[RMDB]
Structure probing data (2A3) for a 207-nucleotide construct. The 2A3 profile rests on 506 reads. The RNA was probed in 150 mM KOAc, 10 mM MgCl2 and 150 mM bicine (pH 8.5) at 24 C. Values cover nucleotides 27 to 156. It was measured as part of the RMDB library ARCHII. For 2A3 the reverse transcriptase was SuperScript II with manganese.
RNA sequence: GGGAACGACUCGAGUAGAGUCGAAAAACUAAGUGAUGGUUGGGGAGAUGUCUAGUCUCUCUUAAGAUAUAGUCGGGCACCUCGGGAAACCUUGGUGGUAAUUCAACUGUGAAUAUGCUCUAGUUUCGGCUAGUUCAUAUCAAUAUGAGAUAACUGUGCUGUGUUAAAAGUUCGCUUUUAACACAGCAAAAGAAACAACAACAACAAC
Reactivity to 2A3 in 0.01 (KOAc 150mM, MgCl2 10mM, bicine 150mM(pH8.5), 24C), signal-to-noise 1, nucleotides 027 to 156: a000c110u140a110a000g130u040g060a050u180g040g070u040u140g000g030g060g000a000g010a020u050g080u050c040u090a100g020u040c020u000c000u000c000u040u050a020a020g030a010u050a020u020a040g040u030c080g010g040g000c020a000c010c000u020c020g000g000g000a050a010a040c000c020u000u030g020g000u020g020g050u040a010a070u040u090c020a130a090c000u100g010u020g120a220a030u020a020u020g030c000u000c000u020a020g030u030u040u140c200g130g000c020u000a000g000u000u000c030a000u020a000u020c060a040a040u120a100u230g010a000g040a100u100a070a100c060u000g020u010